[RMDB]
RNA sequence: GGGAACGACUCGAGUAGAGUCGAAAAGUCUGGGAUAGACGGGAAUAGUCUUGGUCGUGGUCUUCCAAGAGCAUGCUAAAUGAGUCGUGCUCCAUACGGUGGUUCCAUGGAGGAACGGUACGUGUUCUGAGGCUUAUUGAUUCGUCAAUAAGCCUCAAAAAGAAACAACAACAACAAC
Reactivity to DMS in 0.01 (KOAc 150mM, MgCl2 10mM, bicine 150mM(pH8.5), 24C), signal-to-noise 4, nucleotides 027 to 126: g010u000c030u000g020g020g020a110u010a060g010a040c040g020g000g010a090a040u000a080g000u000c040u010u010g000g010u000c060g010u000g010g000u010c040u000u000c050c050a060a090g010a040g000c040a040u000g010c060u010a070a100a090u000g000a050g020u000c010g020u000g000c020u010c000c110a080u010a050c090g010g000u000g030g000u000u000c010c000a160u000g000g020a130g010g010a030a020c040g030g010u000a080c070g010u000g000u010u010c140
Reactivity to 2A3 in 0.01 (KOAc 150mM, MgCl2 10mM, bicine 150mM(pH8.5), 24C), signal-to-noise 1, nucleotides 027 to 126: g010u000c000u010g080g000g040a040u070a060g050a030c010g030g020g020a060a080u070a040g020u070c030u030u020g050g000u020c020g100u010g050g030u030c050u060u000c030c020a000a010g020a010g000c030a040u020g020c020u070a150a160a110u210g060a010g050u100c000g000u000g000c010u000c010c000a050u100a110c060g050g040u070g030g000u060u050c000c010a010u060g100g040a090g020g000a030a000c010g000g000u080a010c030g000u020g030u050u060c030
The data come from the RNA Mapping Database (RMDB), library OK2TRN. This 177-nucleotide RNA was probed chemically with DMS and 2A3. The reactions ran in a buffer of 150 mM KOAc, 10 mM MgCl2 and 150 mM bicine (pH 8.5), at 24 C. For 2A3 the reverse transcriptase was SuperScript II with manganese. DMS adducts were read by reverse transcription with MarathonRT.